[RMDB]
RNA sequence: GGGAACGACUCGAGUAGAGUCGAAAAUUAUGCCGGUUCUUGCGAGUGACAUAGGUUGACAUACGUAUAACCGGUCCCUGCGGUCGAACACGGCUUGACAAUUGGACGAAUCUCGUUGCGCGCCAUCGAUUGGCAACAACUUCGGUUGUUGCCAAUCAAAAGAAACAACAACAACAAC
Reactivity to DMS in 0.01 (KOAc 150mM, MgCl2 10mM, bicine 150mM(pH8.5), 24C), signal-to-noise 2, nucleotides 027 to 126: u020u050a040u000g030c000c030g030g030u000u000c000u010u010g040c030g000a170g000u000g000a000c030a020u060a120g000g020u030u000g000a050c020a130u050a170c170g010u000a120u020a040a020c000c020g000g030u000c000c000c000u010g000c070g000g000u010c200g000a000a030c040a070c010g000g000c010u000u000g000a130c170a070a120u000u000g000g040a090c010g010a270a210u000c070u000c040g010u020u000g000c010g030c240g000c000c000a130u050c150
Reactivity to 2A3 in 0.01 (KOAc 150mM, MgCl2 10mM, bicine 150mM(pH8.5), 24C), signal-to-noise 3, nucleotides 027 to 126: u110u060a070u140g000c000c010g020g010u030u000c080u050u160g170c030g080a020g040u030g020a040c060a120u200a090g040g030u010u010g040a020c010a050u250a080c090g060u160a090u010a190a010c010c000g040g000u010c030c000c000u180g250c030g060g090u110c050g000a050a000c180a090c080g000g000c000u000u030g020a030c060a020a030u010u080g080g000a010c010g030a030a090u060c010u000c010g080u070u030g020c040g000c020g010c030c000a040u060c060